An RNA of 207 nucleotides, treated with DMS and 2A3 and read out base by base.
RNA sequence: GGGAACGACUCGAGUAGAGUCGAAAAGACUAGAGGACUCUUCCUAGUCAGCUCUUCGAUCGACUAGGACUUCAGCUGAUCCUGACUAGGACUUCUCGACUAGUCGAGACUGAGAAGAGCUCUGAUCUCAGCUUCGAUCAGCUAGGAGAAGGAAGUCGAUAUACAACGGAUUCGUCCGUUGUAUAUCAAAAGAAACAACAACAACAAC
Reactivity to DMS in 0.01 (KOAc 150mM, MgCl2 10mM, bicine 150mM(pH8.5), 24C), signal-to-noise 3, nucleotides 027 to 156: g030a150c040u000a060g010a110g010g000a150c020u000c020u000u010c030c010u000a040g020u000c040a110g000c080u000c030u000u010c050g030a150u000c010g010a060c010u000a030g010g010a120c040u000u000c060a070g030c060u000g000a080u010c030c030u010g020a090c130u010a100g010g020a120c010u000u000c060u000c030g000a080c000u000a020g020u000c010g000a070g020a140c060u020g030a140g000a050a050g000a060g010c020u000c050u000g000a110u000c010u000c070a130g010c110u010u010c080g000a080u000c050a240g030c020u010a040g010g010a040g020a060a040g010g020a040a110g020u010c080
Reactivity to 2A3 in 0.01 (KOAc 150mM, MgCl2 10mM, bicine 150mM(pH8.5), 24C), signal-to-noise 8, nucleotides 027 to 156: g030a010c080u130a030g020a060g160g030a060c020u030c030u090u040c010c000u010a010g020u050c060a020g010c010u030c010u080u100c080g080a120u040c030g010a010c020u020a010g040g020a120c020u070u070c040a020g010c020u040g050a300u030c010c020u080g070a120c140u190a020g000g020a010c000u040u010c050u060c040g020a020c000u000a000g000u000c010g010a030g020a060c130u150g050a020g000a120a010g010a020g020c010u010c010u030g030a030u000c030u010c070a120g040c080u160u190c070g010a000u010c010a000g020c010u020a010g020g020a050g010a060a030g090g040a050a010g030u040c050
The reactions ran in a buffer of 150 mM KOAc, 10 mM MgCl2 and 150 mM bicine (pH 8.5), at 24 C. For DMS the reverse transcriptase was MarathonRT.